RNA sequence: GGGAACGACUCGAGUAGAGUCGAAAAAAACCGCUGACAAGCGUCAGCCGACGAUUGGUAGAACAAACUCGAAAUAUUCCAAGUGCUUGUUUUUUAUGGGGAACUUUCUUCGGCGGAGGCGGUCUUACCAGAGACCAAAAUUCGUUUUGGUCUCUGGAAAAGAAACAACAACAACAAC
Reactivity to 2A3 in 0.01 (KOAc 150mM, MgCl2 10mM, bicine 150mM(pH8.5), 24C), signal-to-noise 7, nucleotides 027 to 126: a000a000a000c020c010g010c050u050g020a040c060a160a100g060c040g120u040c030a020g010c010c010g020a020c020g020a040u010u080g090g080u200a070g030a080a020c030a030a060a020c020u020c040g110a080a140a070u220a110u140u110c050c030a150a070g020u030g060c050u060u040g050u050u050u020u020u030u090a200u170g020g000g000g020a020a010c010u020u040u000c000u020u030c000g000g000c000g020g000a030g010g030c020g000g020u000c010u010u020a040
Reactivity to DMS in 0.01 (KOAc 150mM, MgCl2 10mM, bicine 150mM(pH8.5), 24C), signal-to-noise 2, nucleotides 027 to 126: a020a010a060c020c000g000c040u020g000a110c030a140a070g040c110g020u000c070a110g010c070c050g000a020c010g000a040u010u000g020g020u020a080g010a030a050c050a030a000a070c020u020c060g010a040a030a060u040a130u010u020c060c060a100a080g030u020g000c110u020u000g000u000u000u010u010u010u000a060u050g000g000g000g000a060a080c050u000u010u020c020u000u000c020g010g000c000g010g000a180g000g030c010g000g010u010c030u000u000a210